[RMDB]
RNA sequence: GGGAACGACUCGAGUAGAGUCGAAAAUAUGCAAAACUGUUGGUGAGAAGCGAAUAGAUUUCUCCAAAAGUAAUUCUAUAUCAAAAGAAGAGCCACCAUAACCUCCCUGGCUUAUCAACUACCUGGCCUGAUUCCCAAGUUUCGACUUGGGAAUCAGAAAAGAAACAACAACAACAAC
Reactivity to 2A3 in 0.01 (KOAc 150mM, MgCl2 10mM, bicine 150mM(pH8.5), 24C), signal-to-noise 1, nucleotides 027 to 126: u210a030u060g240c110a000a000a060a190c040u080g130u300u000g050g000u080g100a000g060a040a000g050c030g100a160a000u040a120g160a260u000u010u000c030u000c090c000a000a000a100a100g070u080a070a080u130u000c000u120a120u060a070u190c120a080a060a080a050g070a000a000g000a000g000c000c000a070c030c030a030u040a230a030c030c030u000c000c000c000u000g000g000c000u030u030a050u190c000a030a000c010u050a010c000c000u030g030g110c020
This 177-nucleotide RNA was probed chemically with 2A3.
2A3 adducts were read by reverse transcription with SuperScript II with manganese.
Source: RMDB library OK1LIB, as collected in RNAgym.
For 2A3, 348 sequencing reads were counted.
Values cover nucleotides 27 to 126.
The reactions ran in a buffer of 150 mM KOAc, 10 mM MgCl2 and 150 mM bicine (pH 8.5), at 24 C.